An RNA of 177 nucleotides, treated with 2A3 and DMS and read out base by base. The DMS profile rests on 9,295 reads. The data come from the RNA Mapping Database (RMDB), library OK1LIB. Reactivities are given for positions 27 through 126. For DMS the reverse transcriptase was MarathonRT.
RNA sequence: GGGAACGACUCGAGUAGAGUCGAAAAGCAGACGAUGGUACCGGAGCUGAAGCAGGCUAAAGACUUCCUGCAGAAACUGGCCAGUGAUGUUAACUCCAUGAACAUGAGUUCAUGCCAGGCUGCUCAGGGAAGUCUAUUCAUUCGUGAAUAGACUUCCAAAAGAAACAACAACAACAAC
Reactivity to 2A3 in 0.01 (KOAc 150mM, MgCl2 10mM, bicine 150mM(pH8.5), 24C), signal-to-noise 7, nucleotides 027 to 126: g040c010a010g010a070c040g130a120u050g030g040u050a070c040c000g030g050a020g020c030u030g040a040a000g050c030a010g070g000c030u190a120a110a050g060a060c020u060u000c030c010u030g010c000a010g060a020a120a020c010u020g020g010c010c050a090g040u060g130a070u090g040u150u110a040a050c030u030c030c020a040u090g030a050a030c070a120u230g050a060g110u010u010c010a000u060g010c020c010a020g030g000c010u010g000c020u040c080a020g070
Reactivity to DMS in 0.01 (KOAc 150mM, MgCl2 10mM, bicine 150mM(pH8.5), 24C), signal-to-noise 5, nucleotides 027 to 126: g000c020a060g000a110c070g000a070u000g030g060u010a100c050c070g010g000a080g020c060u000g000a160a140g010c010a030g020g010c220u010a070a050a090g010a160c150u010u010c010c000u000g000c010a050g000a070a090a090c060u000g000g000c030c070a080g030u020g000a060u020g010u010u040a050a110c090u000c070c020a070u000g010a050a010c030a180u050g000a140g020u000u000c000a020u000g000c020c020a030g020g000c020u010g020c000u000c150a120g000